[RMDB]
RNA sequence: GGGAACGACUCGAGUAGAGUCGAAAAGAGCGUCGAGAGACGAAGAGAAGUGCACCGAUCAGCAAGGGCGAACGUAAUGGUGCACAAGAGUAAGUCAGUGUAACGUUCUCUGGGCACUGGAGGCAGAAUCGCCGUGGAUGUUCGCAUCCACGGCGAUAAAAGAAACAACAACAACAAC
Reactivity to 2A3 in 0.01 (KOAc 150mM, MgCl2 10mM, bicine 150mM(pH8.5), 24C), signal-to-noise 1, nucleotides 027 to 126: g050a010g010c000g020u000c000g010a030g000a000g000a060c000g060a000a070g010a010g060a280a000g010u000g020c010a000c030c000g060a080u020c090a010g040c080a080a120g130g060g000c000g000a070a050c150g000u060a300a000u040g000g000u030g020c040a000c060a000a020g050a000g060u140a200a020g000u060c050a040g000u000g020u060a030a000c070g000u040u050c000u000c000u000g000g060g060c040a000c000u010g050g000a010g000g080c070a000g020a030
Reactivity to DMS in 0.01 (KOAc 150mM, MgCl2 10mM, bicine 150mM(pH8.5), 24C), signal-to-noise 1, nucleotides 027 to 126: g000a040g020c000g000u000c030g010a290g010a250g010a000c240g080a060a020g030a090g050a130a150g010u000g070c050a010c030c010g000a080u000c060a150g000c220a100a070g000g030g000c030g000a080a120c020g000u020a060a050u000g000g000u000g000c000a050c010a000a060g000a000g030u050a050a050g010u000c060a010g000u000g010u000a010a130c040g010u000u000c000u000c010u000g000g000g010c010a110c050u000g000g020a010g030g000c090a100g000a120